[RMDB]
RNA sequence: GGGAACGACUCGAGUAGAGUCGAAAAGAAGACUAGUUCGCUAGUCUUCAAAAGAGCUAGCAAUGUUCAGCUAGCAAAGAUCCAAAGAUCAAAUGAACAAAAAAACCAUCGACUUCGGUCGAUGGAACUCCACAUAAAACUUCGGUUUUAUGUGGAGAAAAGAAACAACAACAACAAC
Reactivity to DMS in 0.01 (KOAc 150mM, MgCl2 10mM, bicine 150mM(pH8.5), 24C), signal-to-noise 1, nucleotides 027 to 126: g000a020a010g000a030c000u000a000g030u000u010c240g060c000u000a010g000u010c000u010u000c000a030a050a130a120g020a130g030c010u000a000g000c000a080a080u010g000u000u000c010a070g000c000u000a000g000c000a020a030a050g010a100u010c020c050a080a120a090g020a030u010c180a010a040a040u010g000a000a010c010a010a000a130a050a060a120a210c020c000a000u000c000g000a000c000u000u010c130g050g020u000c000g000a010u000g000g000a010a020
Reactivity to 2A3 in 0.01 (KOAc 150mM, MgCl2 10mM, bicine 150mM(pH8.5), 24C), signal-to-noise 2, nucleotides 027 to 126: g010a010a000g000a000c000u000a000g020u020u060c060g000c100u000a000g000u020c000u000u010c000a000a000a000a000g040a000g000c000u010a000g030c010a090a200u050g010u000u020c010a010g000c000u000a000g000c000a020a050a010g020a010u040c020c020a130a090a050g100a080u090c080a000a020a100u060g000a020a020c000a020a000a050a010a000a000a120c010c000a000u000c000g000a010c010u040u050c260g050g000u000c000g000a000u000g000g000a010a000

An RNA of 177 nucleotides, treated with DMS and 2A3 and read out base by base. Values are in units of 0.01, from 0 to 300, in steps of 10. Values cover nucleotides 27 to 126. The reactions ran in a buffer of 150 mM KOAc, 10 mM MgCl2 and 150 mM bicine (pH 8.5), at 24 C. DMS (dimethyl sulfate) methylates the pairing face of unpaired adenines and cytosines. For 2A3 the reverse transcriptase was SuperScript II with manganese.